Structure probing data (2A3) for a 177-nucleotide construct. 2A3 adducts were read by reverse transcription with SuperScript II with manganese. The reactions ran in a buffer of 150 mM KOAc, 10 mM MgCl2 and 150 mM bicine (pH 8.5), at 24 C. Reactivities are rounded to 0.1 and cut off at 0 and 3. It was measured as part of the RMDB library OK1LIB.

RNA sequence: GGGAACGACUCGAGUAGAGUCGAAAAGGGUCGUCAGUGCAGAAACUACGCUUCUCGGAACGGAGUACAACGACGUUGCGACAACACAAAUCUCCUCAGGGGGCAAACUUUUUAAUACCGUAACCCCACGUGGACUGCAAUUCGUUGCAGUCCACGUAAAAGAAACAACAACAACAAC
Reactivity to 2A3 in 0.01 (KOAc 150mM, MgCl2 10mM, bicine 150mM(pH8.5), 24C), signal-to-noise 1, nucleotides 027 to 126: g150g000g000u090c070g000u020c040a010g040u010g030c010a000g140a030a100a000c080u220a030c030g090c050u060u030c030u060c010g010g110a090a040c100g000g110a060g000u080a030c020a010a050c180g050a000c040g020u020u060g040c000g000a040c000a100a000c090a000c000a090a240a120u000c000u040c010c050u180c070a070g000g000g040g000g030c000a090a000a000c000u000u070u050u160u230a050a240u040a170c030c080g130u030a040a100c000c020c000c000